[RMDB]
RNA sequence: GGGAACGACUCGAGUAGAGUCGAAAAUGGGCGAUCGCUCGCUGUUUUUGUGGCUGGCUUUCAGCGGGCUGGAGGAGCCGGGAGCGGAGGCGGAGGACCGAGCCAAAAACAUCAGCCGAGGCCGGGCAAUAUCGUGGACUGUUCGCAGUCCACGAAACUAGAUUCAUUGGUUCGCCAAUGAAUCUAGAAAAGAAACAACAACAACAAC
Reactivity to 2A3 in 0.01 (KOAc 150mM, MgCl2 10mM, bicine 150mM(pH8.5), 24C), signal-to-noise 2, nucleotides 027 to 156: u090g030g000g000c040g030a070u080c100g030c000u010c000g000c030u030g050u030u040u070u090u120g100u000g070g000c060u030g020g020c000u000u100u020c000a010g020c030g000g000g000c040u050g020g010a010g000g070a020g060c050c040g010g000g000a070g030c010g020g060a040g030g020c080g030g020a030g020g020a020c040c060g030a010g000c030c010a100a060a010a030a020c020a100u110c030a010g030c000c020g050a070g000g020c010c000g020g000g010c030a020a030u080a040u140c000g000u000g010g000a000c000u000g030u050u090c180g020c100a000g000u000c000c000a000c000g000a000a000a000